[RMDB]
RNA sequence: GGGAACGACUCGAGUAGAGUCGAAAAAUUUAGUGUGUUAGCAUGCUAUAAUGGUCGUCCGACUGGUACAUUCACUGUUGUAAUGCGCCCUAACUACACAAUUAAGGGUUCCUUUCUGUGUGGUUCUACUAGUCCUACUGUUCGCAGUAGGACUAGUAAAAGAAACAACAACAACAAC
Reactivity to DMS in 0.01 (KOAc 150mM, MgCl2 10mM, bicine 150mM(pH8.5), 24C), signal-to-noise 2, nucleotides 027 to 126: a060u000u000u010a030g040u000g030u010g010u000u010a120g030c030a000u000g020c010u000a060u000a070a080u030g020g000u000c030g000u000c050c030g020a100c090u010g000g010u020a050c080a060u000u010c090a070c180u010g000u000u000g000u000a020a010u020g030c090g000c020c030c090u010a040a030c010u010a010c010a010c010a030a090u010u000a030a020g000g010g010u020u030c030c000u000u000u000c090u010g000u000g020u000g000g000u000u000c210u000
Reactivity to 2A3 in 0.01 (KOAc 150mM, MgCl2 10mM, bicine 150mM(pH8.5), 24C), signal-to-noise 1, nucleotides 027 to 126: a000u100u120u020a040g000u000g030u000g000u040u060a000g040c020a020u040g000c000u030a000u050a130a080u110g070g040u000c000g050u000c060c000g040a060c030u000g030g040u060a020c000a020u010u080c010a040c160u050g070u110u070g060u090a060a010u030g000c000g030c030c020c000u010a010a010c020u030a000c020a000c000a020a150u050u030a010a010g120g000g000u160u210c010c000u000u030u020c020u020g010u010g000u000g020g060u090u010c010u010